[RMDB]
RNA sequence: GGGAACGACUCGAGUAGAGUCGAAAACUGUAAGGAAUUCCUUUGUUUUUCAAGUAGUCCUCCUGCUUGACACACCAAGGACACGUCUUUGAACCGUAAACGGUAACAUCACCCUUGUCGACCGGGGUUUGCAGAAAGGUCGAGACGCCCUGCUGAACCGAAGAAUAGGAUUCGUCCUAUUCUUCGGAAAAGAAACAACAACAACAAC
Reactivity to 2A3 in 0.01 (KOAc 150mM, MgCl2 10mM, bicine 150mM(pH8.5), 24C), signal-to-noise 3, nucleotides 027 to 156: c040u020g050u110a000a050g050g040a050a100u070u040c010c000u010u000u020g010u010u060u010u000u010c000a010a000g010u020a010g100u280c040c080u110c010c000u040g000c000u020u010g000a010c020a000c000a000c020c010a000a020g010g000a010c030a010c130g080u000c040u070u080u090g060a080a030c000c020g030u090a030a080a210c040g010g030u030a080a040c010a090u090c030a040c010c010c000u020u050g100u030c010g010a000c000c010g000g000g000g030u030u050u160g060c020a020g060a060a050a010g030g000u000c010g000a000g010a000c030g020c010c010c020u040g000c000u000g040a080a050
Reactivity to DMS in 0.01 (KOAc 150mM, MgCl2 10mM, bicine 150mM(pH8.5), 24C), signal-to-noise 1, nucleotides 027 to 156: c050u030g000u000a070a070g030g030a220a280u020u000c030c000u000u040u000g000u010u000u010u010u000c030a110a130g000u000a050g020u020c070c090u020c180c000u000g030c030u000u000g000a130c150a080c070a150c100c000a050a060g000g040a030c160a100c060g000u010c000u010u000u000g000a120a160c020c010g000u010a050a110a170c000g000g000u010a080a040c050a050u020c090a090c030c010c030u010u020g040u000c040g000a040c150c060g000g020g000g020u010u000u000g050c020a090g020a060a050a110g000g010u000c020g030a070g030a050c050g000c010c070c030u000g000c030u030g030a120a260